This 177-nucleotide RNA was probed chemically with 2A3 and DMS. DMS (dimethyl sulfate) methylates the pairing face of unpaired adenines and cytosines. For 2A3 the reverse transcriptase was SuperScript II with manganese. The reactions ran in a buffer of 150 mM KOAc, 10 mM MgCl2 and 150 mM bicine (pH 8.5), at 24 C.
RNA sequence: GGGAACGACUCGAGUAGAGUCGAAAACAUGUAUUCAGGCCUUACAUAUGGUGCUGCUGCCGCCUUUGUCUCAAGGUGCAUAAGGAUGCGCUAUCCCACUGAAGACAAGCUAAGCUUCUAUUGGCUAGGUACCUGAGACUUUCGAGUCUCAGGUACCAAAAGAAACAACAACAACAAC
Reactivity to 2A3 in 0.01 (KOAc 150mM, MgCl2 10mM, bicine 150mM(pH8.5), 24C), signal-to-noise 1, nucleotides 027 to 126: c070a050u020g060u150a110u080u190c010a000g050g090c000c000u030u080a020c030a090u180a030u090g050g000u050g000c030u070g060c000u020g020c020c010g050c010c000u160u030u040g040u040c020u000c070a090a030g020g000u060g020c000a010u050a110a050g090g060a050u030g000c050g000c020u040a100u090c000c000c030a030c040u020g000a070a000g090a050c050a000a050g000c010u070a040a020g040c000u040u020c050u170a160u120u050g010g010c050u070a100
Reactivity to DMS in 0.01 (KOAc 150mM, MgCl2 10mM, bicine 150mM(pH8.5), 24C), signal-to-noise 1, nucleotides 027 to 126: c150a030u010g000u000a050u000u030c110a160g020g010c000c030u020u020a080c070a070u010a080u020g000g000u000g020c030u030g000c090u000g030c040c050g010c010c030u000u020u000g000u000c120u010c080a030a080g020g000u000g000c020a030u000a140a080g000g010a120u010g000c040g000c030u000a090u000c010c000c020a150c110u010g010a060a040g010a080c040a070a080g020c100u000a090a150g030c070u000u000c090u010a120u000u000g020g000c030u000a060